[RMDB]
RNA sequence: GGGAACGACUCGAGUAGAGUCGAAAAAGCCAGUGGCGCAUACGUGCGCCACUGGCAGCUGCUGGACCCACCCGGCCGGGAAUAGUGCUCCUGGUUGUUUCCGGCUCGCGUGGGUGUGUCGGCGGAAGCUAAAUGGAAUGUUCGCAUUCCAUUUAGCAAAAGAAACAACAACAACAAC
Reactivity to 2A3 in 0.01 (KOAc 150mM, MgCl2 10mM, bicine 150mM(pH8.5), 24C), signal-to-noise 2, nucleotides 027 to 126: a000g050c010c000a050g010u030g060g000c050g000c170a020u030a140c250g090u100g000c000g000c000c000a000c020u000g000g010c030a000g000c000u040g000c000u030g040g060a020c010c000c020a010c050c100c000g010g020c030c000g010g000g010a000a010u010a030g100u150g090c040u100c070c070u130g180g000u050u020g000u010u000u000c000c000g030g000c150u300c060g010c030g020u090g000g000g010u020g020u020g010u000c010g000g030c040g000g000a080a010
The data come from the RNA Mapping Database (RMDB), library RFM100. The record gives the reactivity of an RNA of 177 nucleotides to 2A3. Values cover nucleotides 27 to 126.